[RMDB]
RNA sequence: GGGAACGACUCGAGUAGAGUCGAAAACAAAGGAGAUGAGGAAGUGCUACUAUCAGCAUUAAACCCAGUCCUCAUUAAAGGGUUUAUUUUUUGCUGCCUUCUGCUCUGAUACCACAAAGGCUGCUCUUUGAAUUUGACCUGGGCAUCCCAUUGCAGAUGCUAAAUCACGAUUCGUCGUGAUUUAGCAAAAAGAAACAACAACAACAAC
Reactivity to DMS in 0.01 (KOAc 150mM, MgCl2 10mM, bicine 150mM(pH8.5), 24C), signal-to-noise 2, nucleotides 027 to 156: c050a100a110a160g020g020a110g010a060u000g010a050g000g010a100a070g040u000g000c010u000a100c080u000a170u060c140a090g000c020a040u000u000a070a050a140c000c000c020a190g000u020c050c030u000c030a020u000u010a080a110a120g010g020g020u010u000u000a040u030u000u010u010u010u010g020c010u010g010c020c020u000u010c030u000g010c020u010c030u000g030a160u010a120c000c050a040c040a060a110a110g000g030c000u000g020c070u000c070u020u010u000g000a020a120u010u000u000g020a040c060c030u000g000g000g030c040a070u000c030c010c010a270u000u000g000c020a000g010a230
Reactivity to 2A3 in 0.01 (KOAc 150mM, MgCl2 10mM, bicine 150mM(pH8.5), 24C), signal-to-noise 3, nucleotides 027 to 156: c050a040a120a020g090g020a080g010a070u100g040a030g020g040a030a010g020u100g060c010u040a080c050u080a170u230c080a010g000c010a010u000u090a060a050a020c000c010c000a020g030u020c030c090u040c030a010u040u150a060a070a100g020g040g040u040u060u010a120u040u080u030u020u100u100g000c050u070g020c010c000u050u040c060u050g040c020u000c020u080g060a070u130a120c040c040a050c060a010a040a010g030g020c010u020g020c010u030c010u050u090u100g110a140a080u100u070u130g020a050c030c000u030g000g040g000c030a030u040c030c000c000a030u090u130g030c030a030g010a100